[RMDB]
RNA sequence: GGGAACGACUCGAGUAGAGUCGAAAAGUCCCCACUUUCGAGUGGGGACAAUCAAAGUUUUGGCACUCGCAGCCCGCAGCGUUGGUGCUCCCACCCGGUGCAUAACUGCCUACUUCGGUAGGCAGAACGCUGUAACAUUCUUCGGAAUGUUACAGCGAAAAGAAACAACAACAACAAC
Reactivity to 2A3 in 0.01 (KOAc 150mM, MgCl2 10mM, bicine 150mM(pH8.5), 24C), signal-to-noise 1, nucleotides 027 to 126: g000u030c020c010c010c000a000c000u100u060u080c270g120a010g010u000g000g010g010g000a000c010a000a010u050c020a000a010a070g020u020u080u210u130g040g000c010a010c030u030c040g060c030a010g040c040c020c010g010c030a030g020c000g060u080u070g030g000u050g010c000u030c000c000c030a070c010c000c010g110g020u090g000c000a010u060a300a080c000u000g020c000c000u030a030c000u030u010c130g120g000u000a010g000g000c010a000g000a020a000
Reactivity to DMS in 0.01 (KOAc 150mM, MgCl2 10mM, bicine 150mM(pH8.5), 24C), signal-to-noise 1, nucleotides 027 to 126: g000u000c000c000c000c020a020c020u010u020u000c170g020a000g030u000g000g010g030g020a000c010a000a090u010c170a060a090a100g000u000u000u000u010g030g030c030a080c050u010c030g020c060a090g010c000c000c080g000c120a040g000c000g030u000u000g000g020u000g000c020u000c010c020c030a140c040c020c040g010g010u010g010c060a080u020a060a200c010u020g000c000c000u000a000c000u000u000c120g030g000u000a020g000g000c000a000g030a030a020
Chemical mapping of a 177-nucleotide RNA with 2A3 and DMS. The DMS profile rests on 1,283 reads.